[RMDB]
The record gives the reactivity of an RNA of 177 nucleotides to DMS and 2A3. It was measured as part of the RMDB library OK2TRN. Conditions: 150 mM KOAc, 10 mM MgCl2 and 150 mM bicine (pH 8.5), 24 C. Values cover nucleotides 27 to 126.
RNA sequence: GGGAACGACUCGAGUAGAGUCGAAAAUCAGUACUACAGCCCGGACUUCGGUGCGGCCACCGGUGCUGCCGUCCCGCUGGACGACUACGGCUACAGCGACUACCGCUAGGUGGGCGAGCAGACGCAGGUCCCCUUGUAUUUUCGAAUACAAGGGGACAAAAGAAACAACAACAACAAC
Reactivity to DMS in 0.01 (KOAc 150mM, MgCl2 10mM, bicine 150mM(pH8.5), 24C), signal-to-noise 5, nucleotides 027 to 126: u010c050a050g010u000a050c040u000a080c150a120g000c140c020c010g000g000a100c060u010u020c100g020g010u010g010c060g010g000c040c050a090c090c060g010g010u000g000c030u000g000c080c030g000u000c040c010c070g010c130u000g000g010a090c100g010a130c070u000a070c050g000g000c030u000a090c070a060g010c010g000a090c070u010a030c030c020g000c130u010a070g000g030u000g000g000g000c000g000a110g010c040a040g000a040c020g000c080a070g010
Reactivity to 2A3 in 0.01 (KOAc 150mM, MgCl2 10mM, bicine 150mM(pH8.5), 24C), signal-to-noise 3, nucleotides 027 to 126: u040c010a000g060u060a050c030u020a030c040a050g060c020c030c000g060g050a070c050u070u060c120g070g020u060g070c000g060g000c030c010a070c030c030g030g030u070g000c030u030g000c010c000g030u020c000c000c020g000c040u070g030g030a040c030g030a070c060u120a040c100g060g000c010u030a050c010a040g010c000g020a050c060u100a040c030c020g060c120u050a060g070g010u030g000g000g020c010g000a030g020c000a010g020a030c020g020c050a000g050